[RMDB]
RNA sequence: GGGAACGACUCGAGUAGAGUCGAAAACGUCCAGCAGAGCAUGCACAAAAUAGUCAGCGCGACGUUGAUCAUGCACAUCGGGACCAGGUACCGCGACGCGGGGAGGUACCUAGGAGACGCACAAAACAACAGCGCCAGGAUCUGCACAUAGACCACGGAGUUUAUCCGUAUUCGUACGGAUAAACUCAAAAGAAACAACAACAACAAC
Reactivity to 2A3 in 0.01 (KOAc 150mM, MgCl2 10mM, bicine 150mM(pH8.5), 24C), signal-to-noise 4, nucleotides 027 to 156: c050g030u030c010c000a010g030c040a010g010a020g020c050a040u090g010c070a020c060a060a100a040a070u190a070g060u050c050a020g030c040g020c050g070a110c070g020u020u030g000a090u060c030a050u050g030c050a020c030a150u160c090g040g000g060a070c000c000a010g030g000u000a010c000c010g010c030g080a100c100g020c050g040g000g020g000a010g020g000u020a050c000c020u030a130g040g040a060g020a040c030g000c040a010c020a060a090a080a020c030a050a000c020a050g000c000g010c030c010a010g020g050a060u020c000u050g060c030a030c020a100u120a020g030a020c010c040a040c150g090
Reactivity to DMS in 0.01 (KOAc 150mM, MgCl2 10mM, bicine 150mM(pH8.5), 24C), signal-to-noise 1, nucleotides 027 to 156: c020g010u000c060c010a190g000c050a090g010a100g000c010a030u000g010c060a130c020a060a050a070a060u000a130g000u000c030a110g030c060g040c100g010a060c090g000u000u010g000a110u010c070a160u000g020c000a080c040a020u000c050g020g030g010a180c050c020a040g010g000u000a000c030c010g000c000g040a080c110g050c220g010g070g010g020a260g020g000u010a020c030c020u000a050g030g010a120g010a060c040g040c030a100c070a100a090a100a060c060a070a160c010a060g000c080g050c020c000a140g000g010a060u000c010u000g050c070a070c250a140u000a050g000a120c000c000a060c110g000
Background
This 207-nucleotide RNA was probed chemically with 2A3 and DMS. For 2A3, 3,016 sequencing reads were counted. DMS adducts were read by reverse transcription with MarathonRT. 2A3 adducts were read by reverse transcription with SuperScript II with manganese. Conditions: 150 mM KOAc, 10 mM MgCl2 and 150 mM bicine (pH 8.5), 24 C. Reactivities are given for positions 27 through 156. It was measured as part of the RMDB library OK3TST.